This 177-nucleotide RNA was probed chemically with 2A3 and DMS. For DMS the reverse transcriptase was MarathonRT. The 2A3 profile rests on 6,781 reads. Values cover nucleotides 27 to 126. Source: RMDB library TTRINS, as collected in RNAgym.
[RMDB]
RNA sequence: GGGAACGACUCGAGUAGAGUCGAAAAGAUAUGGAUCGGACUCAGCCGCAGAGUAUACCUAAGACAGGCACUCGGAAACGAGUGCUCGAGGUAUACUCUGCGGAACUACUGAGUGCGAUCCUAAGUCCGAUAAUCAAUUGUUCGCAAUUGAUUAUCGAAAAGAAACAACAACAACAAC
Reactivity to 2A3 in 0.01 (KOAc 150mM, MgCl2 10mM, bicine 150mM(pH8.5), 24C), signal-to-noise 2, nucleotides 027 to 126: g020a010u150a100u280g000g010a000u000c000g020g060a000c000u000c020a010g000c000c000g020c000a010g000a000g010u000a000u000a010c010c000u080a240a070g180a140c100a110g020g060c010a000c000u000c020g000g000a130a140a070c020g000a000g000u000g000c000u010c000g000a000g020g000u010a000u000a010c010u000c000u000g010c000g000g010a000a000c000u160a000c010u000g000a000g000u020g040c000g000a000u000c000c000u010a040a010g020u000c030
Reactivity to DMS in 0.01 (KOAc 150mM, MgCl2 10mM, bicine 150mM(pH8.5), 24C), signal-to-noise 4, nucleotides 027 to 126: g010a090u000a300u000g010g000a010u000c010g010g000a010c000u000c010a020g000c000c010g000c010a010g010a030g010u000a000u000a010c000c000u010a260a180g010a160c300a090g000g000c000a000c000u000c000g010g000a090a130a190c010g010a000g000u010g010c000u000c030g000a010g010g010u000a010u010a000c000u000c010u000g000c000g010g000a000a000c040u020a300c000u000g000a010g010u000g010c000g000a010u000c000c010u000a040a090g000u010c050